[RMDB]
About this RNA:
Chemical mapping of a 207-nucleotide RNA with 2A3. The 2A3 profile rests on 400 reads. The RNA was probed in 150 mM KOAc, 10 mM MgCl2 and 150 mM bicine (pH 8.5) at 24 C. Reactivities are given for positions 27 through 156. For 2A3 the reverse transcriptase was SuperScript II with manganese.

RNA sequence: GGGAACGACUCGAGUAGAGUCGAAAAGAUUAGUGGUUGCCAAGAGAUAUGGAGGAGAUAGGGACAGAGGGAAGUGGACGUUCCUGUAAAAGGGGAUCUUCGUGGUGAUAGAAGUGUUCUUGACUAUGUCAAUGACAAUAUUCUGGUUUUGAUAUUACUCCUUACGACCAUUCGUGGUCGUAAGGAGAAAAGAAACAACAACAACAAC
Reactivity to 2A3 in 0.01 (KOAc 150mM, MgCl2 10mM, bicine 150mM(pH8.5), 24C), signal-to-noise 1, nucleotides 027 to 156: g070a030u170u260a010g100u030g140g040u050u050g030c030c010a110a000g010a000g000a060u070a070u280g040g030a010g000g010a050g000a000u130a040g070g000g000a010c010a000g080a070g120g000g000a110a000g070u150g010g040a030c040g070u050u030c000c030u030g080u180a010a170a150a040g030g000g000g010a010u010c000u010u020c070g020u040g030g030u010g030a040u040a100g010a050a030g010u040g000u010u030c010u000u040g070a060c060u120a070u290g070u000c000a060a040u170g020a010c050a100a000u080a070u180u020c020u010g000g050u060u030u120u070g030a050u040a040u200u110a040